[RMDB]
RNA sequence: GGGAACGACUCGAGUAGAGUCGAAAAUUCGUUAUGGACGCACUGGUCAACGGUCGCAGGAUCAAGUGCCUGACCUGUGUGGAUGAUUUCACGAAGGAGUGUCUGACGAUCACCGCUGCUUUCGGUAAGUGACAUGGGAAUUCGUUCCCAUGUCACUAAAAGAAACAACAACAACAAC
Reactivity to 2A3 in 0.01 (KOAc 150mM, MgCl2 10mM, bicine 150mM(pH8.5), 24C), signal-to-noise 3, nucleotides 027 to 126: u030u000c030g000u020u070a170u230g070g000a000c030g000c020a020c040u040g000g010u020c020a140a080c160g000g130u190c100g050c080a020g140g210a100u130c080a110a130g000u000g060c000c000u060g000a020c000c000u000g020u000g020u020g050g080a050u100g090a050u060u040u080c050a030c060g030a060a050g020g050a100g010u040g030u040c020u000g010a030c010g020a040u050c030a010c050c020g040c040u090g010c020u060u110u030c030g040g010u070a070
Reactivity to DMS in 0.01 (KOAc 150mM, MgCl2 10mM, bicine 150mM(pH8.5), 24C), signal-to-noise 3, nucleotides 027 to 126: u010u000c030g050u000u020a080u010g020g010a080c060g030c010a140c020u000g000g010u010c020a050a110c150g000g000u000c040g010c170a110g030g030a080u010c100a150a110g010u000g000c090c050u000g010a050c020c010u010g000u020g010u000g000g010a060u020g000a170u010u010u000c060a040c070g010a100a040g000g000a130g020u000g000u000c030u000g020a050c100g000a060u000c070a090c090c020g010c150u010g000c090u000u000u000c070g010g000u020a090